[RMDB]
The data come from the RNA Mapping Database (RMDB), library OK3TST. The record gives the reactivity of an RNA of 207 nucleotides to 2A3. Values cover nucleotides 27 to 156.

RNA sequence: GGGAACGACUCGAGUAGAGUCGAAAAAGUUAAAUAAUUCUUGACAUCACGAUAUCGCAGUGAUAUAGUAUAAACAUAGUCGAAGGCAUACUUUUCCCUACGUGGUAGGCGCCCAUUGGUUUGGAGCGGUGAUUAGGUGCCUUUGACAUUGGAGUCACGACACUAUUAACUUCGGUUAAUAGUGUCGAAAAGAAACAACAACAACAAC
Reactivity to 2A3 in 0.01 (KOAc 150mM, MgCl2 10mM, bicine 150mM(pH8.5), 24C), signal-to-noise 2, nucleotides 027 to 156: a010g110u100u090a100a090a070u210a080a140u160u070c010u030u060g040a010c000a100u020c020a020c040g030a070u030a060u260c110g050c160a070g040u060g090a000u000a020u020a040g090u080a070u070a120a130a000c010a040u060a080g000u000c010g020a000a000g000g020c000a010u150a300c060u050u010u030u070c020c010c000u020a040c070g160u100g000g060u030a020g020g050c000g030c010c030c000a030u060u160g080g210u130u170u090g100g010a150g000c050g000g110u190g020a010u000u060a000g000g010u000g000c000c000u040u040u040g000a000c000a010u010u030g000g030a040g020u020c040a000